An RNA of 177 nucleotides, treated with 2A3 and DMS and read out base by base. Source: RMDB library OK1LIB, as collected in RNAgym. The DMS profile rests on 1,472 reads.
RNA sequence: GGGAACGACUCGAGUAGAGUCGAAAAAGAUUAGCUAUUUUGACAACUUGUUUAGAAUUACAUCGAUCAUUAUUGCGACGAUCCAGCAGAUAGUCCUAAUUAAAUGGGUUGUGGAAGUUCUAAAUACCCCACUGAUUAGGUUCGCCUAAUCAGUGGGAAAAGAAACAACAACAACAAC
Reactivity to 2A3 in 0.01 (KOAc 150mM, MgCl2 10mM, bicine 150mM(pH8.5), 24C), signal-to-noise 2, nucleotides 027 to 126: a000g090a170u090u060a010g020c060u090a190u190u120u080u070g040a090c080a100a020c090u050u100g030u010u030u120a000g020a000a010u170u020a070c030a100u000c070g180a130u000c020a020u000u060a070u090u280g090c030g000a000c000g000a030u000c010c050a030g100c000a010g060a040u060a000g010u000c030c020u010a170a130u050u100a000a040a060u140g040g010g030u030u010g000u000g070g030a070a050g000u000u000c010u000a030a040a060u050a070c010
Reactivity to DMS in 0.01 (KOAc 150mM, MgCl2 10mM, bicine 150mM(pH8.5), 24C), signal-to-noise 2, nucleotides 027 to 126: a080g020a120u010u000a030g030c040u000a130u010u000u090u000g000a060c060a000a030c060u000u010g040u000u000u000a030g060a110a060u110u010a060c050a010u030c050g020a110u000c040a110u000u020a040u010u000g060c110g000a250c140g000a060u000c100c110a260g000c190a130g020a060u000a140g000u030c000c000u000a000a070u020u010a010a000a050u000g000g000g040u060u020g000u000g000g060a050a220g000u000u000c000u040a000a030a000u020a040c090
For 2A3 the reverse transcriptase was SuperScript II with manganese. The reactions ran in a buffer of 150 mM KOAc, 10 mM MgCl2 and 150 mM bicine (pH 8.5), at 24 C.